[RMDB]
RNA sequence: GGGAACGACUCGAGUAGAGUCGAAAAGAUAUGGAAACCUGAGCGCGCGAAUAUAUUCGGAAACGAAUAUAAACGAACUACGCUCUGGUUUCCUAAGUCAAAAGUGUCAUGGUUCGCCAUGACACAAGAAUUAGUUUGUCUUCGGACAAACUAAUUCAAAAGAAACAACAACAACAAC
Reactivity to 2A3 in 0.01 (KOAc 150mM, MgCl2 10mM, bicine 150mM(pH8.5), 24C), signal-to-noise 2, nucleotides 027 to 126: g010a010u010a000u060g000g000a010a000a000c000c000u010g010a000g000c070g010c060g040c020g020a020a000u010a010u010a000u010u010c000g000g010a000a020a000c000g000a020a000u000a000u010a000a030a010c010g060a100a090c200u190a040c230g010c000u010c000u000g000g000u000u000u000c000c010u010a010a000g000u000c010a020a060a090a090g020u000g000u000c000a000u000g010g050u030u100c230g100c100c000a010u010g010a010c000a000c000a010a010
Reactivity to DMS in 0.01 (KOAc 150mM, MgCl2 10mM, bicine 150mM(pH8.5), 24C), signal-to-noise 3, nucleotides 027 to 126: g000a000u000a100u020g000g000a000a010a010c000c000u010g000a010g040c010g040c110g030c050g020a020a300u000a000u000a010u000u000c000g010g010a040a030a030c010g020a020a000u000a000u000a000a030a210c010g020a140a070c230u020a050c010g000c000u000c000u010g000g010u000u000u000c000c000u010a010a070g010u000c010a070a050a090a100g010u000g000u000c000a010u000g000g010u000u020c270g020c000c000a010u000g000a010c000a000c000a010a030

The record gives the reactivity of an RNA of 177 nucleotides to 2A3 and DMS. Reactivities are rounded to 0.1 and cut off at 0 and 3. High 2A3 reactivity points to a flexible backbone, as in loops and unpaired stretches. For DMS, 3,914 sequencing reads were counted. The RNA was probed in 150 mM KOAc, 10 mM MgCl2 and 150 mM bicine (pH 8.5) at 24 C.